Conditions: 150 mM KOAc, 10 mM MgCl2 and 150 mM bicine (pH 8.5), 24 C. An RNA of 177 nucleotides, treated with DMS and 2A3 and read out base by base. As a SHAPE reagent, 2A3 marks flexible, mostly unpaired nucleotides at the ribose 2'-OH. Values are in units of 0.01, from 0 to 300, in steps of 10. The data come from the RNA Mapping Database (RMDB), libraries RFM100 and RFMREP.
RNA sequence: GGGAACGACUCGAGUAGAGUCGAAAAAUCCAGCGACUCCCCAAGGAUGCCAAAAACCUGAGAGAAGAAGUAGUGAGGAAGGCCAACCUUUAUUAGCGAAACUUCCUGUCGGCGGGUGUGGGGUCAAAACGAUUUUAACUUUCGAGUUAAAAUCGUUAAAAGAAACAACAACAACAAC
Reactivity to DMS in 0.01 (KOAc 150mM, MgCl2 10mM, bicine 150mM(pH8.5), 24C), signal-to-noise 7, nucleotides 027 to 126: a060u010c010c010a150g010c140g020a080c110u010c010c000c010c040a100a070g000g020a300u050g000c050c020a040a110a070a090a080c110c100u020g010a100g020a140g010a020a030g000a020a020g000u000a090g000u000g000a140g000g000a000a020g000g000c210c250a110a140c040c010u000u000u000a020u030u000a170g000c000g000a110a180a150c010u010u010c000c010u010g020u020c110g000g000c040g000g000g010u050g000u000g000g000g000g020u010c090a040a050
Reactivity to 2A3 in 0.01 (KOAc 150mM, MgCl2 10mM, bicine 150mM(pH8.5), 24C), signal-to-noise 9, nucleotides 027 to 126: a000u020c000c000a020g050c020g080a040c030u070c010c010c010c010a040a030g050g020a030u080g030c020c010a040a060a060a120a150c050c100u180g030a060g010a010g000a070a000g010a020a000g010u020a000g010u010g040a020g000g020a010a000g010g010c110c050a110a170c300c010u070u020u010a150u170u030a040g010c000g000a010a010a010c000u000u010c000c010u030g070u080c080g010g000c020g000g000g000u040g020u020g000g000g000g010u010c010a060a110